An RNA of 207 nucleotides, treated with DMS and 2A3 and read out base by base.
Reactivities are rounded to 0.1 and cut off at 0 and 3.
The data come from the RNA Mapping Database (RMDB), library OK3TST.
DMS adducts were read by reverse transcription with MarathonRT.
The RNA was probed in 150 mM KOAc, 10 mM MgCl2 and 150 mM bicine (pH 8.5) at 24 C.
RNA sequence: GGGAACGACUCGAGUAGAGUCGAAAAAUCCGAGGCGAAGAUAUCGAGAGUUGAAGGCCAAACGCUGCAACCGCUCUUCACCCUGGCCCGGAACAAUCUCACCGUUGAUGAUGCGGAGCGCAGAAGAGAUCUGCGCCAGGAUAGCAGGAGCUGGCGCGAAUCAUUAACACUUCGGUGUUAAUGAUUCAAAAGAAACAACAACAACAAC
Reactivity to DMS in 0.01 (KOAc 150mM, MgCl2 10mM, bicine 150mM(pH8.5), 24C), signal-to-noise 2, nucleotides 027 to 156: a130u000c020c020g000a110g010g040c030g010a090a080g000a090u000a100u000c070g020a160g000a180g020u010u020g000a100a080g000g030c060c040a090a090a080c130g020c030u000g000c040a050a060c040c010g050c030u000c010u000u000c050a040c010c010c010u000g010g030c000c020c020g000g000a070a080c070a040a060u010c030u010c000a050c010c040g030u000u020g020a130u000g000a110u020g030c000g020g020a040g020c100g000c050a060g000a100a140g010a180g010a150u010c010u000g030c090g030c010c000a020g000g000a070u020a090g010c070a040g020g010a090g050c000u000g020g020c020g010c120
Reactivity to 2A3 in 0.01 (KOAc 150mM, MgCl2 10mM, bicine 150mM(pH8.5), 24C), signal-to-noise 4, nucleotides 027 to 156: a010u030c030c000g020a090g010g010c030g020a060a040g020a090u110a110u220c110g020a090g000a030g110u060u070g050a090a060g050g010c030c040a100a120a030c070g010c040u090g000c030a070a050c020c040g020c010u000c000u050u060c010a040c000c020c010u020g020g000c020c080c030g000g000a030a050c060a020a050u020c000u010c020a040c030c020g010u030u110g060a190u080g010a030u110g050c010g020g010a070g080c120g000c070a020g030a170a020g040a030g010a040u000c010u040g000c010g000c010c000a010g010g010a050u100a070g060c080a020g000g040a010g010c050u050g010g000c020g000c020